[RMDB]
RNA sequence: GGGAACGACUCGAGUAGAGUCGAAAAGCCACCAUAAAUUCUUAAAAGUGGUAUCGCAUUUAGCCCCCCUUCGUACCAAUUCUGUUUUCGUCUCAAGCUCUUCAUUACUACAGCGCAAGUCUACCAUCUCCCCGACUAUAUUCGUAUAGUCGGGGAGAAAAGAAACAACAACAACAAC
Reactivity to 2A3 in 0.01 (KOAc 150mM, MgCl2 10mM, bicine 150mM(pH8.5), 24C), signal-to-noise 3, nucleotides 027 to 126: g000c000c000a000c000c000a040u110a090a180a070u300u130c090u120u220a130a160a030a010g050u030g030g010u040a090u120c110g010c120a060u000u100u130a070g000c000c000c040c000c000c000u010u070c070g020u000a020c000c040a010a110u050u040c010u050g090u060u040u000u070c060g010u030c000u010c060a040a070g030c010u010c020u090u010c040a070u030u150a070c020u030a090c020a080g010c040g000c070a130a000g010u000c010u040a040c000c000a030u030